[RMDB]
RNA sequence: GGGAACGACUCGAGUAGAGUCGAAAAGCUCCCAGGUUCGCCUGGGAGCAAAUAAGAAGCGAGCAUAGGGUAAGGUAGGGAUGCUCGCAAACCCACCACCCAAAACCGACUAGUUCGCUAGUCGGAAGUAAAUACCGUUCUUCGGAACGGUAUUUACAAAAGAAACAACAACAACAAC
Reactivity to DMS in 0.01 (KOAc 150mM, MgCl2 10mM, bicine 150mM(pH8.5), 24C), signal-to-noise 2, nucleotides 027 to 126: g030c000u010c000c020c000a020g000g010u000u030c240g010c000c010u010g000g000g000a030g010c000a010a030a040u000a060a090g010a120a130g030c000g010a010g010c030a050u000a120g030g030g000u000a110a100g010g030u000a080g010g010g020a080u000g010c000u000c020g020c000a000a020a070c000c000c010a220c080c080a090c020c000c050a060a020a080a270c020c010g000a030c010u010a000g020u030u000c200g000c000u020a000g010u010c000g030g010a000a000
Reactivity to 2A3 in 0.01 (KOAc 150mM, MgCl2 10mM, bicine 150mM(pH8.5), 24C), signal-to-noise 2, nucleotides 027 to 126: g000c000u000c020c000c000a000g080g030u030u040c290g050c080c010u010g010g020g000a000g000c010a010a000a010u010a000a000g100a060a000g010c000g020a000g010c020a020u070a110g170g120g030u170a160a100g070g090u080a020g000g130g040a000u000g000c000u000c000g010c000a020a030a020c000c000c010a010c010c020a050c000c010c000a010a030a040a120c020c000g000a000c000u010a010g030u050u090c220g010c110u010a000g010u020c010g000g000a020a000
Source information
The record gives the reactivity of an RNA of 177 nucleotides to DMS and 2A3. Conditions: 150 mM KOAc, 10 mM MgCl2 and 150 mM bicine (pH 8.5), 24 C. The data come from the RNA Mapping Database (RMDB), library M2PK50. DMS adducts were read by reverse transcription with MarathonRT. As a SHAPE reagent, 2A3 marks flexible, mostly unpaired nucleotides at the ribose 2'-OH. The DMS profile rests on 1,285 reads.